[RMDB]
Chemical mapping of a 177-nucleotide RNA with 2A3 and DMS.

RNA sequence: GGGAACGACUCGAGUAGAGUCGAAAAUUUUUUUGAAACUAACAUCAUUUUCGUCUUAGUAAAGAUAAACUUACCAGUGUAAGUAUAGUCUUCUUUUGUGCGAAUUAGUGGCUCAUAAACUAAUUCCAAGUUUUACUGUAUUCGUACAGUAAAACUUAAAAGAAACAACAACAACAAC
Reactivity to 2A3 in 0.01 (KOAc 150mM, MgCl2 10mM, bicine 150mM(pH8.5), 24C), signal-to-noise 8, nucleotides 027 to 126: u070u010u020u020u020u030u190g050a070a020a010c020u070a020a060c040a120u160c030a060u070u060u100u080c040g030u010c030u050u060a070g010u140a040a140a010g020a010u080a040a120a010c000u000u010a010c030c080a210g030u080g000u300a010a000g010u020a050u110a090g010u000c000u040u000c010u000u150u030u080g140u140g040c050g000a000a000u010u010a040g010u010g080g000c040u030c130a070u130a120a100a010c030u030a040a070u040u000c000c000
Reactivity to DMS in 0.01 (KOAc 150mM, MgCl2 10mM, bicine 150mM(pH8.5), 24C), signal-to-noise 6, nucleotides 027 to 126: u000u000u010u010u010u010u010g010a100a060a060c060u010a060a050c120a050u030c100a090u010u010u010u010c060g010u000c050u000u000a060g010u010a050a070a040g000a040u010a090a060a050c030u000u000a030c000c180a130g010u030g010u000a010a040g010u000a070u010a120g010u000c060u000u000c030u000u000u000u000g010u020g010c110g010a010a010u010u000a020g010u000g000g010c160u030c120a070u020a090a060a010c050u000a010a060u000u000c010c020